RNA sequence: GGGAACGACUCGAGUAGAGUCGAAAAACGAAAACUACGCACUCGCAGCUUAAUAACCUGCGCUGAGCCCUUCUCACCCAGCUUGCCUGUGUCCUAGGGAAUUGGAAGGUCAUCCUUCACAGGAUCGUCUAGGUAAUCCCUUUCGAGGGAUUACCAAGUUUUUCCAUGGUUUCGACCAUGGAAAAACAAAAGAAACAACAACAACAAC
Reactivity to 2A3 in 0.01 (KOAc 150mM, MgCl2 10mM, bicine 150mM(pH8.5), 24C), signal-to-noise 1, nucleotides 027 to 156: a000c000g050a000a060a010a000c080u140a030c090g010c080a060c010u020c040g000c000a030g000c010u030u020a030a000u000a020a140c020c000u050g020c050g110c180u050g010a020g010c000c010c010u040u010c060u040c010a050c000c030c000a020g040c110u040u120g010c040c000u010g000u060g050u080c030c040u090a120g000g030g050a090a070u060u210g070g000a060a040g100g050u010c010a030u010c010c000u050u070c030a040c060a050g000g060a050u070c070g090u080c220u130a060g000g000u010a000a000u000c000c010c020u050u020u090c130g100a020g000g000g000a000u000u000a000c000c000a020a000
The data come from the RNA Mapping Database (RMDB), library M2RFPK. This 207-nucleotide RNA was probed chemically with 2A3. The 2A3 profile rests on 586 reads. Values cover nucleotides 27 to 156.